[RMDB]
RNA sequence: GGGAACGACUCGAGUAGAGUCGAAAAACGGAUAGAUUCGUCUAUCCGUGCAUCUCAUAACAGAGAGAGAAAGUCUGCUAAGAUCUCACUUAGAUAAAGAGAAGAGAGUCGAGUUCGCUCGACUCAACGUGGGGUUAAGAUUCGUCUUAACCCCACGAAAAGAAACAACAACAACAAC
Reactivity to DMS in 0.01 (KOAc 150mM, MgCl2 10mM, bicine 150mM(pH8.5), 24C), signal-to-noise 3, nucleotides 027 to 126: a000c000g000g000a010u000a000g010a040u010u020c220g040u010c000u000a000u000c000c000g000u000g000c150a140u000c010u000c000a040u010a110a140c160a130g000a050g010a060g000a100g000a090a110a120g000u000c020u010g010c120u000a020a020g000a040u010c000u010c020a060c020u000u000a060g010a090u010a060a060a070g010a060g010a070a110g020a170g000a010g000u000c000g010a010g020u000u010c200g000c010u000c010g030a020c010u000c000a050a030
Reactivity to 2A3 in 0.01 (KOAc 150mM, MgCl2 10mM, bicine 150mM(pH8.5), 24C), signal-to-noise 2, nucleotides 027 to 126: a000c000g010g010a000u020a010g010a010u030u050c170g040u000c090u000a010u000c000c000g000u000g000c000a070u000c010u010c020a020u060a100a030c100a000g060a000g000a000g010a010g100a130a040a010g130u040c070u050g060c030u070a040a030g000a150u040c000u020c050a030c010u040u050a030g050a150u120a160a130a000g100a000g030a130a030g120a010g000a000g030u000c000g000a010g010u020u080c110g050c040u010c000g000a020c000u000c010a000a020